[RMDB]
RNA sequence: GGGAACGACUCGAGUAGAGUCGAAAAGAUAUGGAGAAAUCAACAGCACGUCACUCGGAAACGAGUGCGUGACAUGAUUCUCCUAAGUCAAAACAGGUCUUCCAUCGUUCGCGAUGGAAGACCUGAAUCUUAGGAGAGCGUUCGCGCUCUCCUAAGAAAAAGAAACAACAACAACAAC
Reactivity to DMS in 0.01 (KOAc 150mM, MgCl2 10mM, bicine 150mM(pH8.5), 24C), signal-to-noise 1, nucleotides 027 to 126: g030a070u010a260u000g000g000a020g000a020a020a030u000c000a050a060c300a150g020c000a010c010g000u020c020a000c000u000c000g000g000a150a050a160c000g000a010g040u000g010c030g000u010g020a030c040a140u000g010a070u020u000c000u000c000c000u000a030a080g010u000c070a110a070a130a210c000a010g040g000u010c020u000u000c000c000a000u000c010g020u010u000c190g030c030g010a010u000g000g000a000a000g000a000c000c010u000g000a040a020